[RMDB]
RNA sequence: GGGAACGACUCGAGUAGAGUCGAAAACCAGAUGACGGUCCUGCCAUGAGACCGCAACGAGAGCAUGUCACAUCGAAUGGACUCGGGGAGUCGGCAGCUUGCCCCACGGAUGAGCGCCUAAUGCCGGAAGAGACGUGCAACUUCGGUUGCACGUCAAUCUUUGCAUAUCGUUCGCGAUAUGCAAAGAAAAAGAAACAACAACAACAAC
Reactivity to DMS in 0.01 (KOAc 150mM, MgCl2 10mM, bicine 150mM(pH8.5), 24C), signal-to-noise 1, nucleotides 027 to 156: c020c000a180g060a090u010g000a000c000g030g010u000c040c010u000g000c150c300a160u010g020a120g020a040c010c040g040c020a030a000c050g000a080g000a120g010c020a020u000g000u000c020a060c060a090u000c040g010a070a300u000g000g000a100c050u000c030g010g040g030g000a150g000u000c040g000g020c000a110g010c040u000u010g070c060c020c030c050a180c100g010g040a100u000g000a080g020c040g030c030c020u030a000a100u000g000c010c000g060g020a090a060g010a130g010a030c000g020u000g000c020a010a020c000u000u000c260g040g010u000u000g000c000a000c020g010u010c000a010a060
Reactivity to 2A3 in 0.01 (KOAc 150mM, MgCl2 10mM, bicine 150mM(pH8.5), 24C), signal-to-noise 2, nucleotides 027 to 156: c000c010a020g030a130u170g030a050c000g040g020u040c010c010u070g110c070c060a140u160g030a080g030a110c010c000g000c010a040a000c060g070a010g000a010g120c050a090u100g040u050c020a030c020a080u110c080g030a070a030u070g050g020a020c030u010c040g000g020g000g020a040g050u050c020g050g000c040a040g020c000u050u110g040c030c000c010c010a040c070g050g000a060u150g020a000g030c050g030c030c020u090a110a010u150g020c020c000g000g030a070a030g130a010g000a000c000g000u000g000c000a000a000c000u030u050c110g130g000u010u000g000c000a010c020g000u000c000a000a000